[RMDB]
RNA sequence: GGGAACGACUCGAGUAGAGUCGAAAAGCUAGUCGGAGACGACUAGCAACGAUCAGUUCGCUGAUCGGAAGGUGCAUUCAAAUACGCUAGAAGCACCAAGUAUCGACGCCUAGCGUAAAACUGAGAAAGCAGAUAACAAAAAUAAAAAGGCGUCGGGCAUAAAUAGUGAGUUCGCUCACUAUUUAUGAAAAGAAACAACAACAACAAC
Reactivity to 2A3 in 0.01 (KOAc 150mM, MgCl2 10mM, bicine 150mM(pH8.5), 24C), signal-to-noise 3, nucleotides 027 to 156: g000c000u000a000g000u000c000g020g020a020g010a120c010g000a000c010u000a000g000c000a000a010c000g000a000u010c000a000g030u070u090c150g020c090u000g000a010u000c000g010g030a060a060g000g000u010g020c100a300u010u030c010a010a030a050u070a020c000g000c020u030a020g010a020a000g010c000a000c000c000a010a020g100u070a060u130c000g000a000c000g000c000c020u030a010g000c000g010u020a030a040a110a110c010u040g020a010g150a200a110a030g160c020a000g040a070u170a140a070c090a070a120a090a020a010u190a100a120a050a000a010g010g000c000g000u000c000g000g010g000
Reactivity to DMS in 0.01 (KOAc 150mM, MgCl2 10mM, bicine 150mM(pH8.5), 24C), signal-to-noise 2, nucleotides 027 to 156: g000c000u010a030g010u020c000g020g010a300g010a300c040g050a030c000u010a010g000c020a090a030c010g000a010u000c000a040g000u000u000c300g060c000u000g040a000u000c000g010g000a110a130g030g040u000g010c000a240u000u020c030a030a130a180u000a030c020g000c000u000a260g010a100a250g020c010a030c010c000a080a130g010u010a020u000c030g000a020c010g020c030c000u010a060g020c010g040u000a050a090a080a120c090u000g010a220g000a120a150a130g000c060a090g010a200u000a080a200c040a020a080a080a130a200u010a020a080a110a080a060g000g010c000g030u000c000g000g000g000